[RMDB]
RNA sequence: GGGAACGACUCGAGUAGAGUCGAAAACAUGUACUCAUGCUCAUGCUAGGUACGAUCGUACAUGGUACGAUAGGUACCUCUAGGUCUAGGUACGCUAGCUAGAGCGCAUCUAUAUCGCCAUGCGUACGGUGUCGUACGCGUUCGCGCGUACGACACCAAAAGAAACAACAACAACAAC
Reactivity to DMS in 0.01 (KOAc 150mM, MgCl2 10mM, bicine 150mM(pH8.5), 24C), signal-to-noise 2, nucleotides 027 to 126: c200a050u010g040u000a020c040u000c070a040u020g020c110u000c270a200u010g040c110u020a080g110g030u010a000c020g030a080u020c070g000u020a030c000a140u000g030g010u000a000c070g000a010u010a010g000g020u000a000c010c000u000c070u000a010g010g010u020c100u030a010g010g020u000a050c120g010c010u000a070g010c140u000a080g000a010g000c120g010c000a020u000c020u000a040u010a030u000c140g010c230c020a010u000g030c120g000u000a020c030
Reactivity to 2A3 in 0.01 (KOAc 150mM, MgCl2 10mM, bicine 150mM(pH8.5), 24C), signal-to-noise 2, nucleotides 027 to 126: c030a040u120g010u040a020c010u010c060a010u080g030c010u090c130a100u220g010c050u130a030g000g000u010a010c010g020a060u080c040g000u030a040c020a240u140g120g000u040a020c040g000a060u010a050g110g050u000a010c030c000u010c000u010a060g000g050u000c000u010a010g050g000u100a080c060g070c060u020a040g020c030u090a060g030a000g160c040g000c010a000u000c010u040a080u010a010u120c020g010c030c020a000u000g020c020g040u010a010c040
An RNA of 177 nucleotides, treated with DMS and 2A3 and read out base by base.
Reactivities are given for positions 27 through 126.
The RNA was probed in 150 mM KOAc, 10 mM MgCl2 and 150 mM bicine (pH 8.5) at 24 C.
For DMS the reverse transcriptase was MarathonRT.
It was measured as part of the RMDB library OK2TRN.